[RMDB]
RNA sequence: GGGAACGACUCGAGUAGAGUCGAAAAGAUUAGGCAGAUAACAACUAUUACGCGUCUUGCCACUGUAUUGUAAAGUAAAGAACAAGAUAUAAGUUUAAUACACCUACGCGACAAGAUGAAUCAGCAAACGACUAUGCAGAUUCGUCUGCAUAGUCGUAAAAGAAACAACAACAACAAC
Reactivity to 2A3 in 0.01 (KOAc 150mM, MgCl2 10mM, bicine 150mM(pH8.5), 24C), signal-to-noise 2, nucleotides 027 to 126: g070a050u110u120a020g070g000c030a030g070a100u050a110a030c010a090a040c060u060a030u140u100a060c080g040c030g010u010c020u030u070g000c010c020a030c020u030g070u000a050u100u050g160u080a060a110a090g030u000a040a100a010g020a030a050c040a060a030g050a070u080a010u060a300a000g020u010u050u040a040a030u020a030c020a050c020c060u000a000c050g060c070g040a020c010a000a000g030a020u060g000a060a100u050c010a010g090c040a060a120
Reactivity to DMS in 0.01 (KOAc 150mM, MgCl2 10mM, bicine 150mM(pH8.5), 24C), signal-to-noise 2, nucleotides 027 to 126: g010a140u000u010a010g040g010c070a040g030a140u010a080a110c050a010a000c130u010a110u010u010a080c180g030c130g000u010c010u020u010g010c060c030a060c040u020g010u010a010u000u000g000u000a080a010a090g000u000a010a020a230g000a080a060c000a040a100g030a080u010a130u010a100a070g000u010u000u000a040a220u000a020c030a100c110c060u010a020c000g000c000g000a010c030a000a010g010a000u010g010a070a030u000c030a070g000c110a030a060
Description
Structure probing data (2A3 and DMS) for a 177-nucleotide construct. The RNA was probed in 150 mM KOAc, 10 mM MgCl2 and 150 mM bicine (pH 8.5) at 24 C. The DMS profile rests on 961 reads. For 2A3 the reverse transcriptase was SuperScript II with manganese.